[RMDB]
RNA sequence: GGGAACGACUCGAGUAGAGUCGAAAAUUCGUCGGUUACGCAAGGCGCUUGAAACUGAUGGUCACGAUAAAAUGGUACAAACUGUCCGGGGAACUGGAUACCGUUUCUCAACGCGCUACUGAGUUUACGGUAAAUACGUCUUCGGACGUAUUUACCGAAAAGAAACAACAACAACAAC
Reactivity to DMS in 0.01 (KOAc 150mM, MgCl2 10mM, bicine 150mM(pH8.5), 24C), signal-to-noise 2, nucleotides 027 to 126: u000u020c030g040u000c020g000g010u000u000a040c160g040c170a150a100g020g020c060g000c010u000u000g000a050a040a080c060u000g000a080u000g010g010u000c080a100c100g020a110u000a030a040a020a060u020g000g020u010a060c140a080a070a170c090u000g020u000c000c020g000g000g040g040a040a090c060u020g040g000a110u000a050c070c030g000u000u000u000c050u000c100a080a080c120g000c000g020c020u000a080c180u000g000a070g000u000u010u000a100
Reactivity to 2A3 in 0.01 (KOAc 150mM, MgCl2 10mM, bicine 150mM(pH8.5), 24C), signal-to-noise 1, nucleotides 027 to 126: u050u000c000g010u000c050g060g000u070u030a080c080g030c070a030a060g120g000c060g000c080u060u080g040a070a050a040c000u040g010a020u030g120g050u030c030a010c180g040a020u160a080a150a010a040u090g040g020u100a060c070a090a120a040c060u060g010u000c010c000g000g000g010g060a040a110c010u040g040g000a020u010a050c010c010g020u000u050u000c050u030c000a060a020c070g000c010g010c030u010a030c030u010g010a010g120u000u060u120a020
An RNA of 177 nucleotides, treated with DMS and 2A3 and read out base by base. For 2A3 the reverse transcriptase was SuperScript II with manganese. The reactions ran in a buffer of 150 mM KOAc, 10 mM MgCl2 and 150 mM bicine (pH 8.5), at 24 C. The data come from the RNA Mapping Database (RMDB), library OK2TRN.